[RMDB]
RNA sequence: GGGAACGACUCGAGUAGAGUCGAAAACGUGCCAUGUUCGCAUGGCACGAAAUAAAGGAUACAGGAAGGCAUCGGCGCACGAUGUAACAAGCGCAAAAUAAAAAACAUUUCACUUCGGUGAAAUGAACCUGUAUACUAUCUUCGGAUAGUAUACAGGAAAAGAAACAACAACAACAAC
Reactivity to DMS in 0.01 (KOAc 150mM, MgCl2 10mM, bicine 150mM(pH8.5), 24C), signal-to-noise 5, nucleotides 027 to 126: c020g030u000g010c000c000a000u000g010u000u010c190g020c010a010u000g000g020c010a010c000g000a010a060a040u010a060a080a100g010g000a070u000a060c080a060g010g000a070a060g000g000c020a020u000c020g000g010c030g000c030a080c060g010a050u010g010u020a060a080c120a050a160g000c020g020c040a090a050a080a100u050a030a060a070a040a050a120c000a010u000u000u000c000a010c000u000u010c240g020g010u000g000a010a020a000u000g000a040a070
Reactivity to 2A3 in 0.01 (KOAc 150mM, MgCl2 10mM, bicine 150mM(pH8.5), 24C), signal-to-noise 6, nucleotides 027 to 126: c010g000u000g000c000c000a010u010g020u030u040c200g010c130a000u000g010g000c000a000c010g000a000a000a000u100a010a060a000g080g010a030u080a150c050a020g090g030a060a020g040g000c010a020u020c020g030g000c030g020c050a090c110g020a010u050g030u110a080a050c040a090a040g010c030g010c040a040a060a080a010u220a040a090a020a010a000a010c010a010u010u000u000c010a010c010u030u060c210g100g000u000g000a000a000a000u000g000a000a020

Background: Conditions: 150 mM KOAc, 10 mM MgCl2 and 150 mM bicine (pH 8.5), 24 C. Structure probing data (DMS and 2A3) for a 177-nucleotide construct. Values cover nucleotides 27 to 126. The data come from the RNA Mapping Database (RMDB), library M2PK50.